[RMDB]
RNA sequence: GGGAACGACUCGAGUAGAGUCGAAAAACAUUAAGUUUCGACUUAAUGUAAACCCGAUGAAGCGGCACAUACGGUGCUUCAUACAUCUAAGAGUGCAAAUAAAAAGUUGAUCCUUCGGGAUCAACAAUGUUUAUUAGUCGUUCGCGACUAAUAAACAAAAAGAAACAACAACAACAAC
Reactivity to 2A3 in 0.01 (KOAc 150mM, MgCl2 10mM, bicine 150mM(pH8.5), 24C), signal-to-noise 4, nucleotides 027 to 126: a000c010a010u010u010a020a010g010u030u020u160c160g040a000c010u000u010a000a000u010g000u010a060a010a020c000c000c000g000a060u050g000a020a010g030c030g090g030c070a030c010a110u300a090c140g260g060u050g020c000u020u010c000a020u030a040c020a030u080c050u170a140a040g090a060g140u120g050c060a040a090a060u200a040a160a020a040a010g000u000u010g000a000u010c000c000u020u050c240g090g010g000a000u000c000a010a000c000a000a000
Reactivity to DMS in 0.01 (KOAc 150mM, MgCl2 10mM, bicine 150mM(pH8.5), 24C), signal-to-noise 4, nucleotides 027 to 126: a020c000a020u000u000a000a010g030u000u000u020c170g020a040c000u000u000a000a000u000g000u000a020a100a130c020c000c010g030a030u000g000a080a060g000c080g020g030c000a050c040a150u020a110c160g010g030u000g000c030u000u010c060a040u020a100c100a030u010c100u010a100a090g010a070g020u000g000c080a100a080a090u010a070a090a080a120a090g010u000u000g010a000u000c000c000u000u010c210g050g000g000a010u000c000a000a000c000a050a030
Record summary
Chemical mapping of a 177-nucleotide RNA with 2A3 and DMS. The reactions ran in a buffer of 150 mM KOAc, 10 mM MgCl2 and 150 mM bicine (pH 8.5), at 24 C. 2A3 adducts were read by reverse transcription with SuperScript II with manganese. The DMS profile rests on 3,377 reads. For DMS the reverse transcriptase was MarathonRT. Values cover nucleotides 27 to 126.